The record gives the reactivity of an RNA of 207 nucleotides to 2A3. The RNA was probed in 150 mM KOAc, 10 mM MgCl2 and 150 mM bicine (pH 8.5) at 24 C.

[RMDB]
RNA sequence: GGGAACGACUCGAGUAGAGUCGAAAAGGGAGGCUGAGGUGGAGGAUCACCUGAGUUCAGGAGGUCGAGGCCACAGUGAACUGUGAUUGCGCCACUGCACUCCACACUGGGCAGCAGACUGAGACCGUGUCUGGAAAAAUAAAAUUGGUAACAAUUCCGUAAGAUACCGGUUCGCCGGUAUCUUACGAAAAGAAACAACAACAACAAC
Reactivity to 2A3 in 0.01 (KOAc 150mM, MgCl2 10mM, bicine 150mM(pH8.5), 24C), signal-to-noise 1, nucleotides 027 to 156: g010g010g000a000g000g010c060u150g010a030g050g000u110g010g020a090g000g020a020u060c040a060c030c060u110g130a080g030u090u130c040a000g010g010a040g000g010u080c020g020a030g100g000c000c000a010c030a090g110u100g110a120a040c090u090g050u080g020a030u000u110g030c060g000c090c030a090c070u100g010c020a040c010u030c000c010a010c000a010c010u000g050g000g000c000a030g000c000a010g050a030c040u060g040a000g020a200c030c080g080u030g000u000c000u010g030g020a050a070a000a060a000u220a010a150a050a030u110u080g000g030u130a120a080c030a040a090u110u080c000